[RMDB]
RNA sequence: GGGAACGACUCGAGUAGAGUCGAAAAGAUAUGGAGGAGCUUUGAUCUUAUGAGCCGAUGAAAUCUCGAGGUUAAUCGGAAACGAUUAACCUCGAGAUGGAGGCUAUAAGGGAGCUCCUCCUAAGUCCCUACAUAGCUGGUUCGCCAGCUAUGUAGGAAAAGAAACAACAACAACAAC
Reactivity to DMS in 0.01 (KOAc 150mM, MgCl2 10mM, bicine 150mM(pH8.5), 24C), signal-to-noise 1, nucleotides 027 to 126: g020a120u000a300u000g010g010a020g020g000a010g030c000u000u000u000g010a110u020c000u000u000a020u000g010a040g040c000c000g030a150u030g000a100a120a010u000c000u000c000g000a030g000g000u000u000a010a000u000c000g010g000a150a080a250c000g010a010u000u000a000a000c000c000u000c000g000a020g010a000u000g000g000a070g020g030c000u000a000u000a000a010g020g000g010a010g020c000u010c000c010u000c000c000u000a010a140g000u020c050